[RMDB]
RNA sequence: GGGAACGACUCGAGUAGAGUCGAAAAAAGGAGCCGUUCCACGCAGGACGCCAACAAGAAGAAGCCGAACCAACUUCAGGUCGCCGCGCACGCACUGGCGCUCGAUCUCCGCCGCGCUCGAGUAGGUGAUUCCAUAUAUGUUCGCAUAUAUGGAAUCAAAAGAAACAACAACAACAAC
Reactivity to 2A3 in 0.01 (KOAc 150mM, MgCl2 10mM, bicine 150mM(pH8.5), 24C), signal-to-noise 3, nucleotides 027 to 126: a000a000g120g010a000g000c020c010g020u020u000c000c000a030c030g020c020a020g030g040a020c010g020c020c020a060a040c060a130a020g110a080a000g010a040a010g070c030c020g060a030a020c010c020a040a070c020u090u060c040a030g000g050u050c010g010c040c010g000c010g030c000a040c030g040c010a040c120u070g030g010c010g000c020u020c020g060a070u000c000u000c020c020g010c030c010g010c000g010c010u010c010g020a030g030u080a050g010g150u080
Reactivity to DMS in 0.01 (KOAc 150mM, MgCl2 10mM, bicine 150mM(pH8.5), 24C), signal-to-noise 4, nucleotides 027 to 126: a120a110g000g010a030g040c000c010g000u000u000c020c010a100c140g040c010a090g010g010a060c100g030c030c050a050a120c100a080a070g000a070a060g000a070a100g010c010c020g030a070a100c060c020a050a120c070u000u000c070a080g000g000u010c030g010c040c050g020c030g010c040a100c070g000c030a060c090u000g010g000c030g000c050u000c030g000a090u010c020u000c040c030g010c030c020g010c070g020c010u000c020g010a050g010u000a050g010g000u000
Overview
The data come from the RNA Mapping Database (RMDB), library VIROID. An RNA of 177 nucleotides, treated with 2A3 and DMS and read out base by base. Values are in units of 0.01, from 0 to 300, in steps of 10. The DMS profile rests on 3,690 reads. The reactions ran in a buffer of 150 mM KOAc, 10 mM MgCl2 and 150 mM bicine (pH 8.5), at 24 C. 2A3 adducts were read by reverse transcription with SuperScript II with manganese.